Background:
Structure probing data (DMS and 2A3) for a 177-nucleotide construct. For DMS the reverse transcriptase was MarathonRT. Source: RMDB library OK1LIB, as collected in RNAgym. For DMS, 1,684 sequencing reads were counted. Reactivities are given for positions 27 through 126.
[RMDB]
RNA sequence: GGGAACGACUCGAGUAGAGUCGAAAACGGCGCAGGCUGGUCAGCAGGAAGCCCUUCUGCGCGCGGUCGUAUCGGCGGCUCAUGGCCACGGCGGCCGCCGCGUGCGCCAGGCCCCAGCCGAAGCGGCAUUAUCGCCGGUGUUCGCACCGGCGAUAAUAAAAGAAACAACAACAACAAC
Reactivity to DMS in 0.01 (KOAc 150mM, MgCl2 10mM, bicine 150mM(pH8.5), 24C), signal-to-noise 2, nucleotides 027 to 126: c200g030g000c010g030c010a160g000g050c000u000g000g030u010c300a170g020c020a110g000g000a070a090g000c010c070c040u020u060c040u100g050c000g000c180g000c000g000g010u000c000g040u000a100u090c000g010g070c280g000g000c000u040c210a130u090g000g000c000c000a050c010g010g040c000g000g010c030c020g000c100c040g000c000g000u000g040c030g010c010c040a180g010g000c050c040c030c000a120g060c020c030g020a170a170g020c080g000g000c020
Reactivity to 2A3 in 0.01 (KOAc 150mM, MgCl2 10mM, bicine 150mM(pH8.5), 24C), signal-to-noise 2, nucleotides 027 to 126: c050g040g000c010g000c080a040g020g110c000u090g070g070u110c040a040g020c020a000g040g070a180a070g000c000c050c010u140u040c070u130g010c010g000c000g000c000g020g000u000c000g000u070a170u300c000g000g060c150g000g000c080u060c140a300u300g060g000c000c000a000c030g030g000c010g000g000c010c000g000c000c000g000c000g040u030g000c000g000c000c000a030g060g030c020c000c000c000a010g020c010c000g040a160a010g040c050g020g000c000